[RMDB]
RNA sequence: GGGAACGACUCGAGUAGAGUCGAAAAUAGUGAGAAGAAGACAGAGGUGCCUUCAAGUGUGGACUGACUUGAGGCAAGAGUGCACGGGCCUGUGAGAUGGGGCCCAUCUGAGUCUGCACUGAGCUGAGACCUAAAUCCGAUUCGUCGGAUUUAGGUCAAAAGAAACAACAACAACAAC
Reactivity to DMS in 0.01 (KOAc 150mM, MgCl2 10mM, bicine 150mM(pH8.5), 24C), signal-to-noise 2, nucleotides 027 to 126: u020a050g010u010g020a110g010a100a100g000a070a060g000a100c040a060g010a120g000g020u010g000c010c010u020u000c050a040a030g040u000g020u010g020g030a030c080u000g010a040c020u010u010g010a070g010g020c050a070a030g000a060g010u010g010c070a110c140g020g010g010c020c010u000g000u000g020a120g010a130u000g000g000g000g000c000c000c020a010u000c060u000g000a090g000u000c040u020g000c050a020c030u000g000a090g020c100u000g000a300
Reactivity to 2A3 in 0.01 (KOAc 150mM, MgCl2 10mM, bicine 150mM(pH8.5), 24C), signal-to-noise 1, nucleotides 027 to 126: u080a010g070u030g030a030g020a160a000g020a030a010g010a010c020a030g050a060g090g000u030g000c000c000u150u100c040a030a040g000u000g080u120g090g120a050c040u040g040a030c020u050u100g000a040g040g010c000a000a010g050a000g080u040g000c040a000c110g000g020g010c000c000u050g050u130g120a060g000a080u120g030g020g030g010c040c000c000a000u000c000u020g010a000g060u020c020u010g000c030a000c000u050g000a010g020c080u030g020a010
Chemical mapping of a 177-nucleotide RNA with DMS and 2A3. Source: RMDB library OK2TST, as collected in RNAgym. Conditions: 150 mM KOAc, 10 mM MgCl2 and 150 mM bicine (pH 8.5), 24 C. DMS adducts were read by reverse transcription with MarathonRT. 2A3 adducts were read by reverse transcription with SuperScript II with manganese. For 2A3, 1,368 sequencing reads were counted. The DMS profile rests on 2,426 reads.